[RMDB]
RNA sequence: GGGAACGACUCGAGUAGAGUCGAAAAGAACAAAGGAGAGGAUAAAGAGGAGCCAGAACCGGGCUACGGUCUUCCGAAGCAUCAUGUUGACGCUGUCUUUCUCGAUGUUCCGUCGCCAUGGCUGGCGCCUACGUGCAUCAUUCGUGAUGCACGUAGGAAAAGAAACAACAACAACAAC
Reactivity to 2A3 in 0.01 (KOAc 150mM, MgCl2 10mM, bicine 150mM(pH8.5), 24C), signal-to-noise 3, nucleotides 027 to 126: g020a010a010c020a000a050a030g080g020a070g000a010g070g010a070u090a120a130a010g060a050g050g040a010g030c020c010a020g000a070a020c010c000g000g040g000c020u040a020c010g000g000u040c020u130u020c070c010g050a050a000g000c000a010u060c020a020u200g080u190u180g070a040c060g040c190u060g010u090c010u060u160u020c060u040c050g020a030u030g050u120u000c000c010g030u020c020g000c000c010a090u220g060g000c060u020g000g020c000g010
Reactivity to DMS in 0.01 (KOAc 150mM, MgCl2 10mM, bicine 150mM(pH8.5), 24C), signal-to-noise 3, nucleotides 027 to 126: g000a090a090c080a050a110a070g010g010a030g000a040g000g010a070u020a040a090a080g000a090g010g010a150g020c050c030a040g020a060a120c060c030g000g010g000c030u000a030c010g010g000u010c070u010u000c030c080g010a080a040g020c040a030u010c030a110u000g000u010u000g020a070c090g030c080u000g020u000c060u000u000u000c080u000c090g000a070u010g000u000u010c020c000g020u000c090g000c000c010a030u000g010g010c060u000g000g000c030g000